Chemical mapping of a 207-nucleotide RNA with 2A3 and DMS. For DMS the reverse transcriptase was MarathonRT. For 2A3, 985 sequencing reads were counted. The reactions ran in a buffer of 150 mM KOAc, 10 mM MgCl2 and 150 mM bicine (pH 8.5), at 24 C. Values cover nucleotides 27 to 156. For DMS, 1,233 sequencing reads were counted.
RNA sequence: GGGAACGACUCGAGUAGAGUCGAAAACAGCUCCAGAACUGAUAGGGGCUUACACUUGGGUUAGUGAUGAGAAGCAGUUAGAUUCAAGGGACCCACAGGUCAUACUGAUGAAUUGAGGACAUGGAGUGAGAGAAGGAGAGAAACCAGGGAUGGCUUCGGGAAUAAUUUUGUUCGCAAAAUUAUUCCCAAAAGAAACAACAACAACAAC
Reactivity to 2A3 in 0.01 (KOAc 150mM, MgCl2 10mM, bicine 150mM(pH8.5), 24C), signal-to-noise 2, nucleotides 027 to 156: c020a000g000c000u030c020c010a030g080a170a090c060u080g080a100u140a150g020g000g010g000c020u060u130a020c050a020c040u070u050g110g000g000u020u070a070g030u080g150a160u060g010a050g010a130a010g010c030a010g020u030u110a040g010a100u060u040c020a010a070g070g020g020a020c010c020c070a060c040a040g000g050u020c020a060u150a230c080u100g100a100u050g020a050a140u110u070g020a010g010g000a010c000a040u100g040g000a040g020u030g010a030g000a000g000a080a020g020g000a030g000a010g040a020a000a010c020c030a040g110g000g020a040u050g010g000c010u160u190c070
Reactivity to DMS in 0.01 (KOAc 150mM, MgCl2 10mM, bicine 150mM(pH8.5), 24C), signal-to-noise 1, nucleotides 027 to 156: c080a110g020c000u010c000c100a100g010a100a210c050u030g000a120u000a190g010g010g000g070c000u000u010a140c170a050c060u000u000g010g030g030u000u000a110g090u030g010a120u000g080a170g020a060a080g030c060a110g020u010u000a140g010a210u000u020c030a050a120g030g000g030a060c050c030c210a050c180a060g010g010u020c070a090u000a090c070u000g030a050u000g010a060a150u000u000g000a070g040g020a030c110a150u010g000g010a150g000u010g020a080g000a100g010a020a120g020g000a010g020a120g010a100a050a070c020c020a090g010g030g000a030u000g020g000c020u000u000c230